RNA sequence: GGGAACGACUCGAGUAGAGUCGAAAAGGGACACGUUCGUUGACAUGAAGGUCACCAUCUGUGCCGCUAUCCUUCUCGCGAUUUGCGCCGCAGGCUUCCUGCCUCUGGCUACACCAGCGGCGGUGCCGUUGACGCUUGGUUUCGACCAAGCGUCAACAAAAGAAACAACAACAACAAC
Reactivity to DMS in 0.01 (KOAc 150mM, MgCl2 10mM, bicine 150mM(pH8.5), 24C), signal-to-noise 2, nucleotides 027 to 126: g000g010g010a060c040a030c070g050u000u000c060g070u010u010g010a070c060a110u030g040a120a100g020g000u000c020a060c040c040a020u010c030u000g030u000g030c090c010g020c040u000a060u000c030c000u010u000c050u010c100g000c070g000a130u010u020u000g000c030g010c110c070g000c060a140g000g000c090u000u000c120c040u000g020c010c010u000c030u010g000g000c090u000a090c250a300c040c020a000g020c050g000g050c000g000g010u010g010c070c120
Reactivity to 2A3 in 0.01 (KOAc 150mM, MgCl2 10mM, bicine 150mM(pH8.5), 24C), signal-to-noise 1, nucleotides 027 to 126: g050g010g000a040c010a010c100g090u040u050c040g020u050u090g020a040c020a110u140g120a110a040g110g020u020c000a020c120c010a020u000c040u090g070u040g030c030c000g020c050u030a040u120c020c000u060u150c100u000c050g060c050g070a130u000u070u300g010c000g000c050c040g000c040a010g010g020c040u140u050c020c010u010g000c000c000u000c000u020g010g040c020u080a020c040a080c020c000a010g000c020g000g000c050g000g050u040g000c030c020